[RMDB]
RNA sequence: GGGAACGACUCGAGUAGAGUCGAAAAGCGCUGCAGAUCACCGGCGAAGAUCGCCGCUUCCGCGCCGCCGGUGCCGGCCCGGACUUCGAGGAACACGUUACGCUCAUCGUUGGGGUCGCGCGGCAGCGGAACGGUAUAAGUUCGCUUAUACCGUUCCAAAAGAAACAACAACAACAAC
Reactivity to 2A3 in 0.01 (KOAc 150mM, MgCl2 10mM, bicine 150mM(pH8.5), 24C), signal-to-noise 9, nucleotides 027 to 126: g090c040g010c020u030g000c020a030g010a260u080c010a010c040c000g010g000c020g030a100a040g060a170u160c040g030c060c030g070c090u210u040c050c030g010c010g010c020c010g000c000c000g030g020u020g000c010c000g000g000c000c010c000g040g030a040c010u030u030c060g010a020g030g080a140a040c100a020c200g230u280u220a110c190g040c060u010c010a040u020c020g010u000u020g080g000g000g000u010c000g000c040g000c020g080g000c010a000g010c020
Reactivity to DMS in 0.01 (KOAc 150mM, MgCl2 10mM, bicine 150mM(pH8.5), 24C), signal-to-noise 9, nucleotides 027 to 126: g020c070g010c030u000g010c020a100g010a140u010c030a040c060c010g000g000c000g000a130a100g000a120u010c050g020c030c110g010c140u000u010c080c080g010c030g010c090c030g010c000c000g010g010u000g010c110c010g010g000c010c010c010g020g010a140c030u000u000c030g010a030g010g010a070a070c090a150c260g010u010u010a100c160g000c020u000c010a050u000c040g010u000u000g010g000g010g010u000c010g010c150g010c090g010g000c010a020g010c030